[RMDB]
RNA sequence: GGGAACGACUCGAGUAGAGUCGAAAACUAGUCAACAAAUCGCCAGACACAGUGGUCUUUGCAUUCUCUGGCGGCAGCAUGUGCUCGGUGGGGGCAAAUGUGUCUGAAGGGGGGGCUGCCAUGUCAGCCUUACAUCGUUAUUCGUAACGAUGUAAGGAAAAGAAACAACAACAACAAC
Reactivity to 2A3 in 0.01 (KOAc 150mM, MgCl2 10mM, bicine 150mM(pH8.5), 24C), signal-to-noise 9, nucleotides 027 to 126: c020u050a040g150u130c050a040a030c020a070a210a060u120c050g010c030c010a010g010a020c020a010c020a110g060u060g100g080u080c080u090u130u190g020c010a070u140u020c040u000c000u030g040g000c000g000g010c000a000g020c010a050u130g040u090g110c030u040c070g170g070u120g040g070g010g000g010c010a010a050a090u100g020u010g010u020c030u070g090a090a130g010g000g000g000g000g000g000c010u010g010c010c000a030u060g040u040c010a000g040
Reactivity to DMS in 0.01 (KOAc 150mM, MgCl2 10mM, bicine 150mM(pH8.5), 24C), signal-to-noise 9, nucleotides 027 to 126: c050u000a080g010u010c090a070a090c130a050a090a090u010c070g010c060c010a020g010a040c120a050c120a070g020u000g010g010u010c100u010u010u000g010c050a080u000u000c070u000c020u000g010g010c040g010g010c090a050g010c080a070u010g020u000g010c030u000c060g010g010u000g010g010g010g000g000c040a020a050a050u000g010u000g010u000c030u000g010a120a110g000g000g000g000g010g000g010c030u000g010c020c070a080u000g010u000c060a080g010
Chemical mapping of a 177-nucleotide RNA with 2A3 and DMS.
Values cover nucleotides 27 to 126.
Source: RMDB library OK2TRN, as collected in RNAgym.
DMS adducts were read by reverse transcription with MarathonRT.